This 207-nucleotide RNA was probed chemically with 2A3.
[RMDB]
RNA sequence: GGGAACGACUCGAGUAGAGUCGAAAAGUGAUGUUCGCAUCACCAUCUAGAUAUGGAGACAUGAUCUAAGCUUUCUAAGACAGUAGGUCGGAAACGACCUAUCGAGAAAGAACGCGAUCAACAGCUCCUAAGUCACACUUCAUUAUUCGUAAUGAAAGAAGAAACCUACCUUCGGGUAGGUUUCUUCAAAAGAAACAACAACAACAAC
Reactivity to 2A3 in 0.01 (KOAc 150mM, MgCl2 10mM, bicine 150mM(pH8.5), 24C), signal-to-noise 1, nucleotides 027 to 156: g000u000g000a000u050g020u100u260c300g000c140a000u030c000a000c090c000a160u000c070u140a070g020a110u080a010u150g040g000a000g010a020c030a100u060g000a000u000c000u050a070a000g030c030u000u000u000c020u020a120a070g080a050c020a010g040u060a010g020g000u000c000g000g000a020a100a040c000g000a000c000c000u000a000u000c000g010a000g000a040a070a000g000a060a040c040g010c000g080a000u010c010a010a050c050a020g040c000u010c000c000u000a060a000g000u020c010a030c040a050c140u100u060c010a060u070u140a060u200u110c230g090u210a040a000u290g110a080a030a140

The reactions ran in a buffer of 150 mM KOAc, 10 mM MgCl2 and 150 mM bicine (pH 8.5), at 24 C. It was measured as part of the RMDB library RNAMAK.